[RMDB]
RNA sequence: GGGAACGACUCGAGUAGAGUCGAAAAUAAGUAGACGAUUCGUCGUCUACUUAACUACACCUUUGUGCACCUAGACAUGCCUGUUCCCAUUGGGACCGAAGGCAACAGCUAGUGUGCACUCUGGUACAUCGCCCGUAUGUAUUCGUACAUACGGGAAAUACGAAAUUUUGUUCGCAAAAUUUCGUAUAAAAGAAACAACAACAACAAC
Reactivity to 2A3 in 0.01 (KOAc 150mM, MgCl2 10mM, bicine 150mM(pH8.5), 24C), signal-to-noise 5, nucleotides 027 to 156: u080a000a000g000u000a000g000a000c010g010a010u060u140c280g060u010c000g000u000c190u010a000c000u000u000a000a000c010u060a040c040a010c040c000u000u000u030g000u010g000c010a000c000c000u010a020g050a110c050a090u060g000c020c000u040g030u100u060c030c020c090a270u190u300g000g000g010a010c050c040g240a190a070g010g000c000a040a020c030a070g020c000u010a000g010u000g000u000g300c000a000c000u000c000u000g000g010u070a060c050a120u200c180g040c040c000c000g000u000a000u000g010u000a020u010u120c300g030u040a000c000a000u000a010c000g000g010g020a040a010
Reactivity to DMS in 0.01 (KOAc 150mM, MgCl2 10mM, bicine 150mM(pH8.5), 24C), signal-to-noise 2, nucleotides 027 to 156: u000a010a040g020u000a000g010a000c010g040a060u000u020c260g000u000c010g030u000c000u000a020c010u000u000a000a090c090u010a150c090a110c000c030u010u000u030g000u000g000c020a020c030c000u000a020g000a080c080a290u000g020c000c020u000g010u010u010c000c000c050a300u020u010g030g010g000a010c060c130g030a130a060g020g020c020a030a070c100a160g030c000u000a050g010u010g070u000g000c030a010c000u000c000u000g040g040u000a110c110a150u010c070g000c000c010c000g020u000a010u000g000u000a080u000u000c300g050u020a010c000a010u000a010c000g020g030g020a000a000